[RMDB]
RNA sequence: GGGAACGACUCGAGUAGAGUCGAAAACGGCAAAAGCAUUAUAAUAUAUUAUUUAUGGAAAGCCGGAACAUAUCUUUAACCACAAGUGAGGAGGGUUUCAUAUCCUCCUCACGGGACUGGAAGGCGGAAACAUAAUCAAAUUCGUUUGAUUAUGUUUAAAAGAAACAACAACAACAAC
Reactivity to 2A3 in 0.01 (KOAc 150mM, MgCl2 10mM, bicine 150mM(pH8.5), 24C), signal-to-noise 3, nucleotides 027 to 126: c000g000g020c010a030a130a200a140g000c040a020u060u170a020u150a230a060u120a290u080a200u270u020a060u050u270u000a010u000g000g000a020a010a020g000c000c000g000g000a010a010c030a020u240a050u030c010u060u100u150a040a050c010c010a030c060a080a070g010u000g000a000g000g010a000g010g040g000u020u140u080c080a080u100a000u220c000c010u030c010c010u000c000a020c010g000g010g020a010c050u010g020g020a060a090g150g020c140g020g030
Reactivity to DMS in 0.01 (KOAc 150mM, MgCl2 10mM, bicine 150mM(pH8.5), 24C), signal-to-noise 5, nucleotides 027 to 126: c020g010g000c000a000a240a140a030g000c000a010u010u030a040u020a020a100u080a300u100a300u060u020a050u000u010u010a030u000g000g000a020a020a050g000c000c010g010g020a080a110c120a070u010a040u010c020u000u000u000a090a140c030c010a040c080a100a120g020u000g010a000g010g010a010g010g000g010u000u020u010c230a070u040a010u000c000c000u000c000c000u000c000a000c020g000g000g010a100c300u010g000g010a070a040g010g010c170g000g010
An RNA of 177 nucleotides, treated with 2A3 and DMS and read out base by base. Conditions: 150 mM KOAc, 10 mM MgCl2 and 150 mM bicine (pH 8.5), 24 C. 2A3 adducts were read by reverse transcription with SuperScript II with manganese. For DMS the reverse transcriptase was MarathonRT.